The record gives the reactivity of an RNA of 177 nucleotides to 2A3.
2A3 is a SHAPE reagent: it acylates the 2'-hydroxyl of flexible nucleotides of all four kinds.
For 2A3, 816 sequencing reads were counted.
Reactivities are given for positions 27 through 126.
The RNA was probed in 150 mM KOAc, 10 mM MgCl2 and 150 mM bicine (pH 8.5) at 24 C.
RNA sequence: GGGAACGACUCGAGUAGAGUCGAAAAUAUGACCGUCCAGAAAAGACAAGAUGAGAAAGUGCAGUAUUGACUGUCUUCAAACGCACCUGUCCUUGCUCAAGUGCUGGGAUUGUGUGCCAACGGCUAUGUUACAUCGAUUCUUCGGAAUCGAUGUAACAAAAGAAACAACAACAACAAC
Reactivity to 2A3 in 0.01 (KOAc 150mM, MgCl2 10mM, bicine 150mM(pH8.5), 24C), signal-to-noise 2, nucleotides 027 to 126: u230a050u040g110a110c000c030g000u020c000c020a060g130a200a120a020a000g040a010c100a000a010g010a130u140g020a010g110a190a120a010g140u150g060c010a030g040u120a150u130u210g180a080c010u060g000u070c000u060u000c040a020a120a090c060g030c000a010c000c030u000g020u040c000c000u030u050g000c040u090c170a300a040g120u070g110c010u000g010g020g000a000u000u150g080u050g000u000g100c000c010a030a000c000g040g000c040u040a040u170